[RMDB]
RNA sequence: GGGAACGACUCGAGUAGAGUCGAAAAUUCCCAGCUCCGACGGAAUGGCGCUCGUGGUUAGUUCGGCCGUCUUGUAUCACGCGAGCGUUUGUAUACCCGUGCGACUCAAGGCGGCGGAACUAGUCACCCAAAGAGUGUUGUUCGCAACACUCUUUGGAAAAGAAACAACAACAACAAC
Reactivity to DMS in 0.01 (KOAc 150mM, MgCl2 10mM, bicine 150mM(pH8.5), 24C), signal-to-noise 1, nucleotides 027 to 126: u000u000c000c000c000a140g010c050u000c020c020g010a080c120g000g020a120a130u000g010g020c090g000c050u010c120g030u020g000g020u000u000a020g010u010u000c020g010g020c000c000g010u000c010u000u000g010u030a080u000c010a040c000g020c000g000a040g010c170g030u000u000u010g020u000a070u020a030c000c010c000g010u000g010c030g000a020c030u000c010a000a000g010g020c000g000g010c010g010g000a000a010c000u000a000g000u000c000a020c030
Reactivity to 2A3 in 0.01 (KOAc 150mM, MgCl2 10mM, bicine 150mM(pH8.5), 24C), signal-to-noise 1, nucleotides 027 to 126: u020u000c000c000c000a000g030c010u000c010c000g120a100c080g060g290a100a130u130g010g000c010g000c020u030c090g010u010g000g000u020u010a010g020u020u000c040g180g000c000c000g000u000c000u000u000g030u000a010u030c010a010c030g020c030g130a170g170c130g100u040u030u140g140u020a140u050a010c000c000c010g010u020g010c010g000a000c010u000c020a000a000g000g000c020g030g010c030g000g000a000a000c000u000a000g000u010c020a020c030